Chemical mapping of a 177-nucleotide RNA with 2A3 and DMS. It was measured as part of the RMDB library OK2TRN. For DMS the reverse transcriptase was MarathonRT.
RNA sequence: GGGAACGACUCGAGUAGAGUCGAAAAACCCCGUCUCUGCUAAAAAUGCAAAAAUUAGCCGGGCGUGGUGGCGUGCACCUGUAAUCCUAGCUACUUAGAUGGCUGAGGCAGGAGAAUCACUUGAACCCUGUAUCGACAGUUUCGACUGUCGAUACAGAAAAGAAACAACAACAACAAC
Reactivity to 2A3 in 0.01 (KOAc 150mM, MgCl2 10mM, bicine 150mM(pH8.5), 24C), signal-to-noise 1, nucleotides 027 to 126: a000c000c020c010c000g040u000c040u000c020u060g000c020u000a020a060a060a070a070u160g040c040a040a020a040a120a180u000u030a020g000c010c040g020g010g000c010g040u010g000g000u020g030g010c070g070u070g050c040a060c010c020u030g020u070a030a100u070c000c000u010a020g000c020u000a000c000u190u160a080g170a300u130g010g010c020u070g000a010g020g080c010a020g000g020a010g000a020a060u090c020a020c020u040u160g070a070a060c070c030
Reactivity to DMS in 0.01 (KOAc 150mM, MgCl2 10mM, bicine 150mM(pH8.5), 24C), signal-to-noise 2, nucleotides 027 to 126: a080c020c010c010c030g000u000c040u010c020u010g030c030u000a000a030a030a080a090u000g010c140a040a060a080a120a120u000u000a010g010c010c060g010g000g020c040g030u010g000g010u000g000g010c140g000u000g010c220a130c020c030u000g030u000a050a140u000c030c020u000a030g020c000u000a020c040u000u020a080g000a170u000g000g020c040u000g000a060g000g010c020a000g000g010a130g000a140a070u030c070a020c040u010u000g000a120a120c080c020